[RMDB]
RNA sequence: GGGAACGACUCGAGUAGAGUCGAAAAUUGUUGCCAGCAAGCAUGGGAAUUGUCGAUGCUUGGACUGGAGUCAUGGUCUCAAAACCCAUAACAUCGAGUCCUGUCCUUAUCCAGGGAAGUAAAGAAAAUAUACGGUAUCAUUCGUGAUACCGUAUAUAAAAGAAACAACAACAACAAC
Reactivity to 2A3 in 0.01 (KOAc 150mM, MgCl2 10mM, bicine 150mM(pH8.5), 24C), signal-to-noise 8, nucleotides 027 to 126: u090u060g080u040u100g040c000c000a000g010c010a020a000g000c000a010u060g060g060g130a180a260u230u180g150u140c070g060a020u010g010c000u010u010g030g080a080c000u000g030g000a000g010u010c020a060u090g040g000u030c040u000c020a070a130a120a150c000c020c010a030u120a140a070c060a150u090c060g030a010g030u020c010c030u030g080u060c000c020u120u090a120u090c050c050a040g000g020g060a060a040g080u200a050a100a050g120a030a130a050
Reactivity to DMS in 0.01 (KOAc 150mM, MgCl2 10mM, bicine 150mM(pH8.5), 24C), signal-to-noise 9, nucleotides 027 to 126: u020u010g010u000u010g020c020c010a030g010c030a040a020g010c010a010u000g000g020g020a120a140u030u040g020u030c030g000a020u000g020c010u000u000g000g010a100c010u000g000g000a110g010u010c050a020u010g000g000u000c020u000c190a090a070a110a150c170c000c010a060u020a060a060c080a100u020c050g000a050g000u010c010c030u010g010u010c010c010u010u020a070u030c080c080a100g000g000g000a060a090g000u020a060a070a090g010a080a060a080